This 177-nucleotide RNA was probed chemically with 2A3 and DMS. 2A3 adducts were read by reverse transcription with SuperScript II with manganese. Source: RMDB library TTRDEL, as collected in RNAgym. Reactivities are rounded to 0.1 and cut off at 0 and 3. The RNA was probed in 150 mM KOAc, 10 mM MgCl2 and 150 mM bicine (pH 8.5) at 24 C.
[RMDB]
RNA sequence: GGGAACGACUCGAGUAGAGUCGAAAAGAUAUGGAUCGGUCAUAACAGCAACAGCUCGGAAACGAGACAUGCUGGUAUGCCGAUCCUAAGUCAAACUAAUUAGGCACCUUCGGGUGCCUAAUUAGAACCUAUAAGGUACCUUCGGGUACCUUAUAGGAAAAGAAACAACAACAACAAC
Reactivity to 2A3 in 0.01 (KOAc 150mM, MgCl2 10mM, bicine 150mM(pH8.5), 24C), signal-to-noise 2, nucleotides 027 to 126: g000a020u060a040u110g000g000a000u000c000g000g100u300c050a010u010a040a010c010a000g010c010a010a070c040a200g060c000u000c000g010g030a060a050a040c010g000a000g060a040c000a010u080g000c000u000g020g010u010a000u010g030c010c000g000a000u010c000c000u010a010a000g020u010c000a080a070a140c000u000a000a000u000u000a010g010g000c000a020c020c020u040u110c300g070g000g000u030g000c000c000u000a000a000u000u010a000g000a000a010
Reactivity to DMS in 0.01 (KOAc 150mM, MgCl2 10mM, bicine 150mM(pH8.5), 24C), signal-to-noise 4, nucleotides 027 to 126: g000a030u000a300u000g010g000a010u000c000g000g000u030c020a000u000a000a020c010a000g010c000a020a070c250a200g010c000u010c000g000g000a090a090a210c000g000a010g000a020c100a160u000g020c010u000g000g000u000a000u000g000c000c010g010a000u000c000c000u000a010a090g000u000c050a120a080a230c000u000a010a010u000u000a010g000g000c000a010c000c000u000u010c200g010g010g020u000g010c000c000u000a000a000u000u000a010g000a110a180